Structure probing data (2A3 and DMS) for a 207-nucleotide construct. 2A3 adducts were read by reverse transcription with SuperScript II with manganese. DMS adducts were read by reverse transcription with MarathonRT. Conditions: 150 mM KOAc, 10 mM MgCl2 and 150 mM bicine (pH 8.5), 24 C. Reactivities are given for positions 27 through 156.
RNA sequence: GGGAACGACUCGAGUAGAGUCGAAAACCGUGACAUUGCGAAAGCAAGGCUGGCGGUAGGUAGUCCUGGGCGGCGACAGCCUUGGACUGCGGCGUAAAGGUGUACCUGGGGCCGUUAAAGCUAUCGUGAAAGGCAACUUGGUUCGCCAAGUUGCCAACAAUGAGAUGUUCUUCGGAACAUCUCAUUGAAAAGAAACAACAACAACAAC
Reactivity to 2A3 in 0.01 (KOAc 150mM, MgCl2 10mM, bicine 150mM(pH8.5), 24C), signal-to-noise 4, nucleotides 027 to 156: c000c000g060u070g070a090c140a160u020u080g020c020g050a120a020a030g020c020a020a030g060g030c070u060g030g030c010g010g020u020a030g010g090u030a000g010u000c000c010u000g010g020g000c040g040g030c100g080a060c060a020g000c000c000u000u010g000g010a000c000u010g000c000g010g000c010g040u110a050a040a010g060g010u170g100u270a160c000c000u020g000g010g090g000c000c000g020u030u080a020a080a020g050c000u010a030u030c010g030u040g070a110a070a020g000g000c000a000a000c000u000u020g000g010u060u050c100g020c070c010a000a000g000u000u000g000c000c000a000a000
Reactivity to DMS in 0.01 (KOAc 150mM, MgCl2 10mM, bicine 150mM(pH8.5), 24C), signal-to-noise 3, nucleotides 027 to 156: c010c000g020u010g000a040c040a080u000u000g000c020g010a170a140a250g010c020a040a010g030g030c000u000g050g060c040g020g010u000a070g010g030u000a020g020u000c000c000u010g000g020g020c000g000g000c040g010a100c180a160g010c000c000u010u000g000g010a020c010u000g000c000g000g000c040g030u010a070a200a080g000g060u010g000u000a100c030c000u000g030g010g030g020c010c020g000u000u010a040a090a130g010c030u000a050u000c020g000u000g000a050a080a120g010g030c000a030a010c020u000u000g010g020u000u000c300g000c010c000a000a050g010u000u010g010c000c000a000a010